[RMDB]
RNA sequence: GGGAACGACUCGAGUAGAGUCGAAAAUCAAUGAAUGGAUUCACCCGUGAGAUGACGUGUUUGUUUCACCAGGACGAGGAUGUGGCAUCAUAUUACUAGCCAUCGCACGAAAUUAAUAGGAUGGCACGUACAUAUACCCGUUCGCGGGUAUAUGUACAAAAGAAACAACAACAACAAC
Reactivity to DMS in 0.01 (KOAc 150mM, MgCl2 10mM, bicine 150mM(pH8.5), 24C), signal-to-noise 3, nucleotides 027 to 126: u000c030a110a110u010g040a140a070u010g010g020a080u000u010c070a120c020c020c080g010u000g010a070g000a060u010g000a070c150g010u000g000u020u000u010g000u000u000u000c030a060c050c060a070g010g020a060c110g000a070g000g010a040u000g030u000g020g000c080a040u000c050a050u000a070u010u010a120c130u000a150g010c030c000a020u000c030g000c110a080c160g000a070a070a120u010u010a040a080u000a110g010g010a020u010g000g000c000a050c190